[RMDB]
RNA sequence: GGGAACGACUCGAGUAGAGUCGAAAAUAGGGAUUCGUCCCUAGGUAAUCCUAAGUCACCUGCGUUUGACGCGAUCUGGAGUCGACCAUCGGAAACGAUGGCCGACUAUGAAGGAUCGCCGAGCAGGUGAUAUGGAAAGUUUCUGCUUCGGCAGAAAAACUUAGGUUAGUUUCGACUAACCUAAGUUAAAAGAAACAACAACAACAAC
Reactivity to 2A3 in 0.01 (KOAc 150mM, MgCl2 10mM, bicine 150mM(pH8.5), 24C), signal-to-noise 4, nucleotides 027 to 156: u050a010g020g000g020a020u050u110c250g080u050c100c000c000u000a020g030g050u110a070a090u030c020c000u020a090a020g010u000c000a000c000c000u000g020c040g130u110u180u300g090a100c070g000c010g000a000u000c010u010g010g040a010g000u000c010g000a010c000c000a010u010c000g020g020a110a030a050c010g000a000u000g000g000c000c000g000a000c000u010a100u030g020a010a010g020g000a000u000c000g000c000c000g010a010g000c000a000g000g010u000g010a000u000a000u020g010g030a010a070a060g040u040u030u000c010u000g010c000u030u060c200g120g000c010a000g030a010a010a020
Reactivity to DMS in 0.01 (KOAc 150mM, MgCl2 10mM, bicine 150mM(pH8.5), 24C), signal-to-noise 4, nucleotides 027 to 156: u000a020g000g020g000a040u000u000c300g030u000c010c000c000u000a000g000g020u010a080a150u010c030c000u000a080a260g010u000c000a010c010c000u000g000c020g010u000u010u010g050a140c170g010c010g030a010u000c010u000g010g010a050g020u000c000g000a000c000c010a020u000c000g000g010a190a120a230c020g010a030u000g000g010c000c000g020a010c000u000a010u010g010a220a300g000g000a010u000c000g040c000c020g000a140g010c000a030g020g010u000g000a000u000a060u000g000g010a100a070a170g000u000u000u000c000u000g010c010u000u000c250g030g000c010a020g000a010a030a090